About this RNA
Conditions: 150 mM KOAc, 10 mM MgCl2 and 150 mM bicine (pH 8.5), 24 C. This 207-nucleotide RNA was probed chemically with 2A3. For 2A3, 651 sequencing reads were counted.
RNA sequence: GGGAACGACUCGAGUAGAGUCGAAAACUGGACGUGGGCGAUGUCACAUUUAUUGAGCACUUACUUAGUGCAUGCCAGGCACUGAGUGAAGACUCUACCUGCAGCAUCUCGCUGAGCCAUCGUGACAGCUCUGUGAGGUGGGUGCCACUUCCAGCAGGUAGCGGGACAGGUUCGCCUGUCCCGCUACAAAAGAAACAACAACAACAAC
Reactivity to 2A3 in 0.01 (KOAc 150mM, MgCl2 10mM, bicine 150mM(pH8.5), 24C), signal-to-noise 2, nucleotides 027 to 156: c010u000g000g000a010c020g010u020g000g060g180c090g080a190u220g090u280c030a000c030a110u220u260u170a180u120u180g000a030g000c090a060c170u000u000a000c000u010u050a020g010u000g030c030a040u230g140c050c060a080g050g130c000a000c030u000g000a000g000u020g000a000a060g010a030c000u000c020u030a090c000c050u100g010c050a070g030c000a000u000c030u000c000g010c010u020g000a000g020c030c000a090u220c110g140u090g170a140c120a010g010c000u000c000u000g010u010g020a000g000g000u010g010g010g040u090g020c000c000a000c000u000u000c000c010a030g000c000a000g100
It was measured as part of the RMDB library OK3TST.